An RNA of 177 nucleotides, treated with 2A3 and DMS and read out base by base. 2A3 is a SHAPE reagent: it acylates the 2'-hydroxyl of flexible nucleotides of all four kinds. For DMS, 3,042 sequencing reads were counted. DMS adducts were read by reverse transcription with MarathonRT. Source: RMDB library M2PK90, as collected in RNAgym.

RNA sequence: GGGAACGACUCGAGUAGAGUCGAAAAAAAGUGUACGAAAGAACAAAGAAGCAAUCAAACCGAGUAGUGAAAUGAUGGCUUCAGACCAAAAUGGGCAAACACUACAGACGGAGCCAAAGGCAAUUAAAUAGAAUAUGAGUUUCGACUCAUAUUCUAUAAAAGAAACAACAACAACAAC
Reactivity to 2A3 in 0.01 (KOAc 150mM, MgCl2 10mM, bicine 150mM(pH8.5), 24C), signal-to-noise 2, nucleotides 027 to 126: a000a020a000g110u080g000u030a050c040g060a090a010a070g010a090a020c020a030a090a040g030a020a000g040c040a000a010u070c030a130a000a000c060c020g030a030g050u140a020g030u100g060a090a060a080u070g040a020u020g040g000c000u100u090c030a000g020a040c030c000a040a030a070a140u110g000g000g000c010a050a050a000c000a020c010u040a040c020a020g040a010c040g060g010a030g000c020c010a040a000a010g030g000c020a020a000u110u070a220a210
Reactivity to DMS in 0.01 (KOAc 150mM, MgCl2 10mM, bicine 150mM(pH8.5), 24C), signal-to-noise 3, nucleotides 027 to 126: a040a040a030g000u000g030u020a040c080g000a060a090a100g000a060a050c080a060a090a080g010a050a060g000c030a050a030u000c020a050a100a150c100c040g000a070g010u010a040g000u000g010a080a080a080u010g010a030u010g000g010c010u000u010c020a060g000a090c050c040a020a040a060a070u000g000g000g010c050a060a040a040c030a020c030u010a040c050a060g000a110c080g000g000a110g010c040c020a040a040a060g010g010c070a040a070u000u010a050a070